[RMDB]
RNA sequence: GGGAACGACUCGAGUAGAGUCGAAAAAACAAUUCCCGAACGCGAAAUCGCUCUCGCUGCUUAAUUAACGCAGCGACGUCCUACCCGGUUUGCCUGUAGGCUGGGAUAGGGCGUAAGACAUACAGGAUAGGAGGUUGCCAACCUCCCCUGAGGUAACCUAUAUCUGAGAGUUCGCUCUCAGAUAUAGAAAAGAAACAACAACAACAAC
Reactivity to DMS in 0.01 (KOAc 150mM, MgCl2 10mM, bicine 150mM(pH8.5), 24C), signal-to-noise 2, nucleotides 027 to 156: a090a070c030a110a150u000u000c000c000c010g010a130a040c040g000c040g010a090a130a050u000c040g040c030u000c050u000c010g030c000u000g030c000u010u000a160a170u010u010a080a140c180g010c030a030g030c000g010a040c030g020u000c000c010u000a070c000c000c000g030g030u000u000u000g000c000c030u020g000u000a040g000g020c010u010g000g000g020a180u000a010g020g020g000c010g020u000a020a080g030a160c140a040u000a050c010a020g000g000a060u010a070g020g010a090g030g020u000u000g000c070c070a140a210c040c000u020c000c020c000c030u000g000a120g010g010u000a150a110c140
Reactivity to 2A3 in 0.01 (KOAc 150mM, MgCl2 10mM, bicine 150mM(pH8.5), 24C), signal-to-noise 4, nucleotides 027 to 156: a000a030c080a030a030u050u010c000c000c000g050a160a030c060g020c000g090a080a060a170u300c070g000c030u050c010u010c020g000c000u000g000c010u130u150a250a230u220u110a300a030c050g010c000a000g020c000g010a000c000g000u000c010c000u000a010c000c000c010g010g000u000u000u000g010c000c000u020g000u020a010g000g010c000u000g000g010g020a050u010a010g010g020g000c000g000u000a000a000g030a010c010a010u010a000c000a010g010g020a010u020a030g010g010a000g000g020u080u140g170c050c050a020a020c020c010u030c010c010c000c010u130g070a050g080g050u060a020a040c000